RNA sequence: GGGAACGACUCGAGUAGAGUCGAAAACGGUUACGCCUUCUUUACCGUUAUCAAGGAAGGUACUCGGCAAUGCUAAGGGAAGCAUUAUUCCUUAGGCGCAUGUCGCCGCCAGCAUGGUGUGAGGGGAAAAAGUAUGCUGGGUUCGCCCAGCAUACAACCUAUGUCAGGGGUUCGCCCCUGACAUAGGAAAAGAAACAACAACAACAAC
Reactivity to 2A3 in 0.01 (KOAc 150mM, MgCl2 10mM, bicine 150mM(pH8.5), 24C), signal-to-noise 4, nucleotides 027 to 156: c020g000g020u020u070a030c070g030c000c010u010u000c020u050u010u070a040c020c010g250u140u080a060u080c070a010a000g030g000a000a000g010g000u060a060c050u050c050g030g000c020a040a050u040g000c010u040a050a080g030g010g010a010a010g000c050a180u040u140a150u140u110c010c000u070u060a060g040g030c040g010c030a080u180g080u180c050g000c040c000g010c020c020a020g020c020a040u060g000g040u050g080u100g070a070g040g030g040g070a000a060a000a020a030g000u000a000u000g010c010u010g010g030g010u010u030c110g090c010c000c000a000g000c000a000u000a000c000a000a000
Reactivity to DMS in 0.01 (KOAc 150mM, MgCl2 10mM, bicine 150mM(pH8.5), 24C), signal-to-noise 1, nucleotides 027 to 156: c030g030g000u000u010a040c040g020c010c000u000u010c020u000u000u000a010c010c020g000u000u000a030u000c090a040a040g040g010a000a000g030g000u000a090c020u000c010g000g000c050a130a030u000g010c020u000a070a130g040g020g020a060a070g020c190a160u000u000a140u010u000c000c000u000u000a170g020g010c040g080c100a060u030g020u000c010g000c030c020g000c030c110a120g040c010a090u000g000g030u000g000u010g000a080g000g020g040g020a080a020a060a080a100g020u000a000u000g000c000u000g020g000g010u000u000c220g090c010c000c000a000g000c000a000u000a000c010a030a100